[RMDB]
RNA sequence: GGGAACGACUCGAGUAGAGUCGAAAAGAUAUGGAACGCAGUAGGGAGCUACUCGGAAACGAGAAUAGCGAAGAACUACCCGUUCCUAAGUCAAACCUUGCGGUGUUCUUCGGAACACCGCAAGGAACGAUUCAAUUAAGUUCGCUUAAUUGAAUCGAAAAGAAACAACAACAACAAC
Reactivity to 2A3 in 0.01 (KOAc 150mM, MgCl2 10mM, bicine 150mM(pH8.5), 24C), signal-to-noise 4, nucleotides 027 to 126: g030a020u070a040u170g000g010a000a000c010g000c100a050g010u000a010g000g020g020a030g000c000u010a010c000u000c000g000g030a070a060a040c020g020a010g020a300a300u060a060g010c020g110a300a020g020a030a020c000u000a000c000c010c020g000u000u000c000c000u010a080a020g040u030c030a030a030a140c000c000u000u020g000c000g000g030u010g000u000u030c020u060u090c300g090g010a010a000c020a000c000c000g000c000a000a010g000g000a000a000
Reactivity to DMS in 0.01 (KOAc 150mM, MgCl2 10mM, bicine 150mM(pH8.5), 24C), signal-to-noise 4, nucleotides 027 to 126: g020a040u000a300u000g000g000a010a010c000g020c300a070g020u000a010g000g010g010a120g000c000u000a030c000u000c000g000g000a060a080a170c020g000a010g000a080a110u000a010g010c000g000a080a120g020a090a150c000u000a000c000c300c000g000u000u010c000c000u000a010a090g000u000c020a090a160a170c010c000u000u010g010c000g000g000u000g020u000u000c010u000u010c170g000g000a010a000c000a000c000c010g010c010a000a000g010g000a010a040
Chemical mapping of a 177-nucleotide RNA with 2A3 and DMS. Reactivities are rounded to 0.1 and cut off at 0 and 3. The RNA was probed in 150 mM KOAc, 10 mM MgCl2 and 150 mM bicine (pH 8.5) at 24 C. DMS adducts were read by reverse transcription with MarathonRT.